[RMDB]
RNA sequence: GGGAACGACUCGAGUAGAGUCGAAAAGAUUAAGUGGGAGCGUCGCCCUAUCGGUGCAUCGGAUAUUAAUUAGCCAGUGCGUGGCACUACGCAUAUUGAUGUCUACUUUGGCGUAGACUUUGCCAAUUUAAGGAUUGCUGGGCAAUCCAGCCCUAGAACCCACCAUAGUAUUCGUACUAUGGUGGGUAAAAGAAACAACAACAACAAC
Reactivity to 2A3 in 0.01 (KOAc 150mM, MgCl2 10mM, bicine 150mM(pH8.5), 24C), signal-to-noise 4, nucleotides 027 to 156: g050a020u140u160a090a020g060u110g020g040g000a060g020c040g050u030c010g040c030c000c000u080a140u170c050g040g030u070g040c020a020u070c050g030g010a020u010a060u100u130a210a070u120u120a030g010c010c020a010g010u000g020c040g020u060g050g020c100a030c090u050a000c020g010c030a020u040a100u150u080g120a110u070g050u010c020u040a060c030u050u100u140g080g000c060g000u010a020g010a040c010u060u040u060g010c020c010a050a050u030u080u140a080a060g010g000a030u000u100g000c030u080g030g030g050c020a010a010u010c000c000a000g010c000c000c000u060a080g050a050
Reactivity to DMS in 0.01 (KOAc 150mM, MgCl2 10mM, bicine 150mM(pH8.5), 24C), signal-to-noise 2, nucleotides 027 to 156: g000a170u010u000a020a100g030u000g010g000g000a060g000c050g000u010c010g020c030c020c050u010a080u020c090g020g030u000g030c030a050u000c050g020g020a060u000a060u010u000a080a120u000u010a150g010c000c010a050g010u000g010c010g020u000g030g040c030a190c040u000a070c020g010c010a150u000a100u000u000g000a140u000g040u000c060u000a080c040u000u010u000g010g030c070g000u000a030g010a040c020u020u000u000g010c000c030a060a140u010u000u000a110a120g000g010a110u000u010g000c030u010g040g010g000c050a060a050u000c110c000a100g000c010c010c000u010a100g010a070